Chemical mapping of a 177-nucleotide RNA with 2A3 and DMS. The 2A3 profile rests on 9,712 reads. Reactivities are rounded to 0.1 and cut off at 0 and 3. The reactions ran in a buffer of 150 mM KOAc, 10 mM MgCl2 and 150 mM bicine (pH 8.5), at 24 C. For DMS the reverse transcriptase was MarathonRT. Reactivities are given for positions 27 through 126. Source: RMDB library TTRDES, as collected in RNAgym.
RNA sequence: GGGAACGACUCGAGUAGAGUCGAAAAGAUAUGGAAGUUGAGUGUAGGGAGCUUGCGGAUCGGAAACGAUCCGGCAAGCGAAGAACUACAUGUAAGCUUCCUAAGUCAAAGUCUGGUUCGCCAGACACCAUCUUACAACGUUCGCGUUGUAAGAUGGAAAAGAAACAACAACAACAAC
Reactivity to 2A3 in 0.01 (KOAc 150mM, MgCl2 10mM, bicine 150mM(pH8.5), 24C), signal-to-noise 3, nucleotides 027 to 126: g000a020u060a030u140g000g020a020a020g030u130u160g150a100g170u040g000u000a010g000g000g040a030g000c000u000u000g010c010g000g000a010u010c000g010g000a050a040a020c010g000a000u000c000c000g030g170c010a000a000g000c000g000a090a040g000a000a000c010u000a000c010a000u050g090u220a140a040g000c010u000u000c000c000u030a110a010g000u020c060a160a040a020g000u000c000u010g030g140u040u100c300g060c080c000a000g000a000c000a010
Reactivity to DMS in 0.01 (KOAc 150mM, MgCl2 10mM, bicine 150mM(pH8.5), 24C), signal-to-noise 4, nucleotides 027 to 126: g000a040u000a300u020g000g000a010a010g020u000u010g010a300g020u010g000u010a030g010g010g000a090g020c010u000u000g010c000g020g000a000u000c000g000g000a100a080a130c000g000a000u000c000c010g010g010c000a000a000g010c010g000a040a100g020a110a200c000u000a000c010a010u000g010u010a240a140g000c020u000u000c000c000u000a050a100g020u000c040a150a130a140g010u000c000u000g000g000u010u020c270g020c000c020a030g010a020c030a120